Conditions: 150 mM KOAc, 10 mM MgCl2 and 150 mM bicine (pH 8.5), 24 C. The record gives the reactivity of an RNA of 177 nucleotides to 2A3 and DMS. As a SHAPE reagent, 2A3 marks flexible, mostly unpaired nucleotides at the ribose 2'-OH.
RNA sequence: GGGAACGACUCGAGUAGAGUCGAAAAUAAUCGAAUAAUUUGCCAGUGAUAUGAUGACAUUGUCACAAAGAUCACAAGGGACACAGAGUUGACUUUUGCUCAAGGUGGAACGGCAAAGCUCUAUAGACUUAGCUUUACUCUUCGGAGUAAAGCUAAGAAAAGAAACAACAACAACAAC
Reactivity to 2A3 in 0.01 (KOAc 150mM, MgCl2 10mM, bicine 150mM(pH8.5), 24C), signal-to-noise 1, nucleotides 027 to 126: u110a010a040u080c030g030a040a010u070a070a110u100u040u010g040c000c030a000g000u030g010a000u000a020u060g220a120u000g000a050c160a290u120u300g020u000c000a000c040a030a100a020g230a010u010c010a000c030a040a020g090g000g000a030c020a000c030a040g050a020g060u040u040g170a180c100u070u120u150u110g000c000u000c020a030a030g130g020u030g060g020a040a040c000g000g000c000a000a060a000g020c020u000c030u120a030u080a120g020a010
Reactivity to DMS in 0.01 (KOAc 150mM, MgCl2 10mM, bicine 150mM(pH8.5), 24C), signal-to-noise 2, nucleotides 027 to 126: u000a080a110u040c100g000a100a110u020a050a150u020u000u000g010c010c000a110g000u000g020a020u010a080u000g000a100u000g000a050c000a180u000u000g000u000c020a060c000a120a140a070g020a030u000c000a010c020a230a110g000g000g060a300c060a040c020a130g000a020g010u000u020g000a120c140u000u000u020u000g000c060u010c050a080a130g000g040u000g000g000a190a110c050g000g000c020a040a020a040g020c200u000c030u000a200u010a070g000a190
For 2A3, 753 sequencing reads were counted. Source: RMDB library RFMREP, as collected in RNAgym.